RNA sequence: GGGAACGACUCGAGUAGAGUCGAAAAAUUUUCAGUGGGUCGCUGAUAGCUUAGAGGGGAAAGAAAACGAACUUUACGUGGAAAGAGAUUGGUACGACAAUCCGACUCUUAUUUCCAAAGAGGAUGCCUACUACGCAGGGUUCGCCCUGCGUAGUAGAAAAGAAACAACAACAACAAC
Reactivity to DMS in 0.01 (KOAc 150mM, MgCl2 10mM, bicine 150mM(pH8.5), 24C), signal-to-noise 1, nucleotides 027 to 126: a120u010u000u010u000c030a090g010u000g030g010g040u030c050g030c050u000g010a060u010a050g030c040u000u000a030g000a220g030g000g000g000a090a020a130g000a030a040a090a060c110g000a070a080c090u000u000u000a040c100g000u000g000g000a060a040a070g000a010g030a100u030u000g030g030u000a080c170g040a100c180a050a040u020c000c030g010a030c030u000c010u010u000a100u000u010u000c000c020a050a070a080g010a030g000g000a050u010g010c110

Conditions: 150 mM KOAc, 10 mM MgCl2 and 150 mM bicine (pH 8.5), 24 C. Chemical mapping of a 177-nucleotide RNA with DMS. The data come from the RNA Mapping Database (RMDB), library OK2TRN. Reactivities are given for positions 27 through 126.